Chemical mapping of a 177-nucleotide RNA with DMS. For DMS the reverse transcriptase was MarathonRT. For DMS, 741 sequencing reads were counted.

[RMDB]
RNA sequence: GGGAACGACUCGAGUAGAGUCGAAAAUUAAUGAGGACCAAAUGGCUGUAAAGCGCGUAAUGCUCGAAAUGGUCCUAAACAGCCAAAUCGGGCAAAUCGAGCAAUCCCAACGACAGCGACAAAACAAGCCUGAAAGUUAUUUCGAUAACUUUCAGGCAAAAGAAACAACAACAACAAC
Reactivity to DMS in 0.01 (KOAc 150mM, MgCl2 10mM, bicine 150mM(pH8.5), 24C), signal-to-noise 1, nucleotides 027 to 126: u000u060a010a100u000g000a220g010g030a160c060c080a080a050a090u040g000g000c020u000g000u010a000a120a120g000c000g000c000g050u000a080a240u000g000c010u000c000g000a060a000a300u000g000g010u000c010c000u000a000a120a170c220a210g000c010c010a000a020a190u010c030g000g030g010c030a030a100a080u000c000g000a050g000c000a190a090u000c000c000c000a050a080c200g000a060c000a010g000c080g020a040c140a040a030a110a010c190a090a090